The record gives the reactivity of an RNA of 177 nucleotides to 2A3 and DMS.
Conditions: 150 mM KOAc, 10 mM MgCl2 and 150 mM bicine (pH 8.5), 24 C.
For DMS the reverse transcriptase was MarathonRT.
RNA sequence: GGGAACGACUCGAGUAGAGUCGAAAAGAUAUGGAAAGCGAAGAACUGGCCCGGGUACGACGAAGUCGGAAACGACAGAGUACCCUCCAGGGAGCUUUCCUAAGUCAAAGCGUGCUUCGGCACGCAACUAACUGGAUGAGUUCGCUCAUCCAGUUAGAAAAGAAACAACAACAACAAC
Reactivity to 2A3 in 0.01 (KOAc 150mM, MgCl2 10mM, bicine 150mM(pH8.5), 24C), signal-to-noise 2, nucleotides 027 to 126: g000a020u060a030u120g000g000a000a000a010g000c020g250a300a020g000a110a080c040u020g000g020c110c290c140g000g000g000u030a070c070g170a030c040g030a300a020g010u000c020g000g000a070a100a070c020g010a000c000a010g020a000g000u000a000c000c000c020u000c000c010a000g020g000g000a000g020c000u010u000u000c000c010u000a070a020g030u000c040a140a080a030g020c010g000u000g000c010u050u120c190g110g000c000a000c000g010c000a000a000
Reactivity to DMS in 0.01 (KOAc 150mM, MgCl2 10mM, bicine 150mM(pH8.5), 24C), signal-to-noise 3, nucleotides 027 to 126: g020a040u000a300u000g010g000a020a000a020g000c010g000a150a140g000a110a170c000u020g000g000c190c150c300g000g000g010u000a000c000g000a130c180g000a070a100g020u000c000g010g020a070a090a130c000g000a020c000a080g000a130g010u000a000c000c000c020u000c010c000a000g000g000g000a040g010c010u000u000u000c000c000u000a020a070g020u010c040a070a090a150g000c000g030u000g000c010u000u020c210g010g000c000a010c000g010c000a010a030